Structure probing data (2A3 and DMS) for a 177-nucleotide construct.
It was measured as part of the RMDB library OK1LIB.
[RMDB]
RNA sequence: GGGAACGACUCGAGUAGAGUCGAAAAGGUGGAGCAACGCUGGACCUUUUUUCCAUCUACGUUUGCUGAUUGGAACAGUUUGGUAGUAGGUCCAGCGUAGGAUAUUUUUUUAUCCAGCGAACACCGAGGGAUUUGCCUUCUUCGGAAGGCAGGUCCCAAAAGAAACAACAACAACAAC
Reactivity to 2A3 in 0.01 (KOAc 150mM, MgCl2 10mM, bicine 150mM(pH8.5), 24C), signal-to-noise 9, nucleotides 027 to 126: g000g000u010g010g010a070g020c040a040a020c010g000c000u000g000g000a000c000c000u050u070u020u010u080u040c010c000a020u020c010u040a050c070g090u060u080u090g170c050u070g080a300u200u300g100g040a110a030c010a020g040u060u070u080g050g000u030a040g020u020a000g010g000u000c000c000a000g000c000g000u000a000g000g000a000u000a020u020u170u030u010u000u030u020a000u000c000c000a020g000c000g030a170a010c000a000c000c000g010a140
Reactivity to DMS in 0.01 (KOAc 150mM, MgCl2 10mM, bicine 150mM(pH8.5), 24C), signal-to-noise 5, nucleotides 027 to 126: g000g000u000g000g010a300g030c020a250a050c020g000c000u000g000g010a010c000c000u000u000u010u010u000u010c010c010a080u060c020u010a060c070g000u030u000u020g010c030u020g000a190u060u030g010g030a060a070c030a030g010u000u000u010g000g010u000a040g000u000a010g000g000u000c000c000a000g000c010g020u010a010g000g010a010u000a000u000u000u020u020u040u010u010a010u000c000c000a280g020c010g000a110a300c020a040c000c000g000a140